[RMDB]
RNA sequence: GGGAACGACUCGAGUAGAGUCGAAAAGGGUGGACGCUUGCCCUCCCUUCGUGGAGGUUCCUGGUCUCCGCGCGAUUACACGCCGGCGACUCAAGGCACCUACACGAACGGACGGUUCGUGUCUCUCAACAGGGGGGAAUUUCGAUUCCCCCCUGUUAAAAGAAACAACAACAACAAC
Reactivity to DMS in 0.01 (KOAc 150mM, MgCl2 10mM, bicine 150mM(pH8.5), 24C), signal-to-noise 3, nucleotides 027 to 126: g030g000g000u040g020g000a000c000g020c040u010u000g010c000c000c070u000c000c000c070u000u000c040g010u000g000g000a000g030g000u000u000c000c000u000g000g000u000c000u010c010c040g010c190g000c010g000a140u010u070a120c290a240c000g010c030c020g000g000c070g000a030c000u000c090a130a050g010g010c060a000c000c000u000a020c000a000c000g000a020a000c300g000g010a020c300g000g000u000u010c090g010u000g000u000c010u010c000u000c050
Reactivity to 2A3 in 0.01 (KOAc 150mM, MgCl2 10mM, bicine 150mM(pH8.5), 24C), signal-to-noise 4, nucleotides 027 to 126: g090g020g020u180g020g010a000c010g010c010u000u020g000c000c000c000u000c000c000c000u000u000c000g000u000g010g010a000g000g000u000u010c000c000u010g020g000u000c010u000c000c000g040c060g000c000g060a060u140u250a100c130a020c080g000c000c000g000g000c010g000a010c000u020c280a060a030g010g010c010a000c000c000u000a010c000a000c000g010a000a000c000g000g010a000c000g000g000u010u010c010g000u000g010u010c000u000c000u010c050